[RMDB]
RNA sequence: GGGAACGACUCGAGUAGAGUCGAAAACUUGGUGCCGUUCUCUGCUGUUCUGACUAACCAGAUGGCGCUCUGGUGCAUUGACCCUCGAAUCACUAUCAGGGGAUGUAGUUUUUACAACUUUGGUGGAGCGGCCAUAUAUUUGGAGCGGUCGGAGAGACCAAGCUAUCGUGUUCGCACGAUAGCUUGGAAAAGAAACAACAACAACAAC
Reactivity to 2A3 in 0.01 (KOAc 150mM, MgCl2 10mM, bicine 150mM(pH8.5), 24C), signal-to-noise 2, nucleotides 027 to 156: c010u060u120g090g080u140g000c000c000g080u130u010c000u020c050u040g020c010u010g050u020u000c020u030g010a040c030u050a080a110c010c010a030g020a080u060g010g000c000g000c000u010c010u020g120g020u100g000c000a000u000u090g140a190c020c020c000u050c120g120a070a050u170c070a180c290u150a100u120c040a040g000g010g000g010a000u030g020u050a030g050u100u030u110u090u110a100c090a080a070c210u240u000u210g120g030u140g020g010a000g000c000g120g000c080c000a000u130a020u030a010u030u120u070g040g000a070g010c030g070g040u050c110g000g000a020g000a000g020a010